[RMDB]
RNA sequence: GGGAACGACUCGAGUAGAGUCGAAAAGAGGAGCAGGCAGAUAAUCUUGUGCAGUAUGCAUGCUCGUAACUCCAGCGCACAAGUGGAGGCACAAGAUUUGAAUCCAGCAUAGCGCAGGAGCCGCAGACGUAUGGCUACGAUUCGUCGUAGCCAUACGAAAAGAAACAACAACAACAAC
Reactivity to 2A3 in 0.01 (KOAc 150mM, MgCl2 10mM, bicine 150mM(pH8.5), 24C), signal-to-noise 4, nucleotides 027 to 126: g100a020g110g010a000g010c020a030g040g000c020a010g010a110u110a060a010u020c000u020u020g010u010g000c030a060g060u110a070u120g060c050a030u090g010c030u030c050g020u020a020a030c000u010c000c000a040g000c040g020c020a020c030a300a070g070u030g040g010a010g020g000c000a000c000a010a000g000a000u030u030u160g080a020a040u020c000c000a000g010c030a090u150a130g020c010g000c030a020g010g020a010g000c020c020g010c030a020g030a110
Reactivity to DMS in 0.01 (KOAc 150mM, MgCl2 10mM, bicine 150mM(pH8.5), 24C), signal-to-noise 4, nucleotides 027 to 126: g010a090g000g000a030g000c000a010g000g010c020a100g020a150u010a060a080u010c000u000u000g010u000g020c000a240g020u000a100u010g010c000a080u000g000c020u010c000g010u000a100a180c020u000c010c010a060g010c010g010c130a080c230a060a120g060u000g010g000a050g010g020c000a010c020a000a010g000a100u010u040u020g000a140a080u000c010c000a110g010c120a110u040a070g020c030g000c020a060g000g010a030g020c040c070g020c140a110g020a210

The data come from the RNA Mapping Database (RMDB), library OK1LIB. Structure probing data (2A3 and DMS) for a 177-nucleotide construct. The RNA was probed in 150 mM KOAc, 10 mM MgCl2 and 150 mM bicine (pH 8.5) at 24 C. Values cover nucleotides 27 to 126.